RNA sequence: GGGAACGACUCGAGUAGAGUCGAAAAGUCUCCCGAUUCGUCGGGAGACCGAGAAAUUCAGGUGAUUUGCUACCUUUAAGAGCAGCUAGAAAUUCAAAGGAAACACCAUGGCGUUCGCGCCAUGGAAUGAUUAAUUUGUCUUCGGACAAAUUAAUCAAAAAGAAACAACAACAACAAC
Reactivity to 2A3 in 0.01 (KOAc 150mM, MgCl2 10mM, bicine 150mM(pH8.5), 24C), signal-to-noise 4, nucleotides 027 to 126: g000u000c000u000c000c000c000g010a020u010u040c130g020u010c000g030g020g000a010g000a000c000c000g010a030g090a030a150a030u170u140c080a030g000g040u020g050a170u080u090u130g010c010u040a050c010c000u130u160u230a130a070g060a020g030c010a010g030c030u120a040g160a100a140a100u240u140c060a150a090a030g090g020a090a100a000c020a010c030c000a000u000g000g000c010g020u010u040c260g000c010g000c080c000a000u000g000g010a010a000
Reactivity to DMS in 0.01 (KOAc 150mM, MgCl2 10mM, bicine 150mM(pH8.5), 24C), signal-to-noise 5, nucleotides 027 to 126: g000u010c010u000c010c000c000g020a020u010u010c200g030u010c000g010g010g010a000g000a000c000c020g000a110g010a300a080a080u000u010c050a090g010g010u000g010a100u010u010u010g000c020u000a070c020c030u000u010u010a040a040g000a040g010c010a030g000c180u020a100g010a050a060a080u010u010c080a050a050a100g000g000a090a090a060c160a120c000c000a000u000g000g010c000g020u000u020c230g020c010g010c000c000a000u000g000g010a030a040